This 177-nucleotide RNA was probed chemically with DMS and 2A3.
RNA sequence: GGGAACGACUCGAGUAGAGUCGAAAAACGGGCAGUGGCGAUGGCAACGCGGCAGCCGCAGGGUCGACUUCUUCGCAGCCGCAACAGACGGGUAACGGGCAAAGAGGGGAACUCGUUCUGUUGGAAGCGCAUUAAUUACUUUCGAGUAAUUAAUGCGAAAAGAAACAACAACAACAAC
Reactivity to DMS in 0.01 (KOAc 150mM, MgCl2 10mM, bicine 150mM(pH8.5), 24C), signal-to-noise 5, nucleotides 027 to 126: a090c080g000g000g030c050a060g010u020g000g010c030g010a070u020g000g010c130a080a090c130g010c040g000g020c080a070g020c060c030g000c050a080g020g000g000u010c040g010a080c090u010u000c010u010u010c060g000c040a070g020c040c040g000c010a060a020c030a030g000a040c030g020g000g000u000a080a160c100g030g000g000c130a080a060a090g030a130g000g000g000g020a090a040c010u010c000g000u020u000c020u000g010u000u000g000g000a080a090g000
Reactivity to 2A3 in 0.01 (KOAc 150mM, MgCl2 10mM, bicine 150mM(pH8.5), 24C), signal-to-noise 9, nucleotides 027 to 126: a000c040g010g020g000c040a050g030u060g070g010c040g050a100u080g050g010c030a050a040c060g010c000g060g000c020a020g030c020c020g010c030a030g020g030g020u050c020g030a060c000u060u020c000u040u030c060g010c040a020g030c010c020g010c010a000a010c010a010g030a000c010g030g000g000u040a110a030c030g020g080g000c070a100a100a020g060a080g030g020g010g020a020a020c010u000c020g050u160u040c010u020g010u000u010g020g020a080a010g050
Source information:
Source: RMDB library OK1LIB, as collected in RNAgym.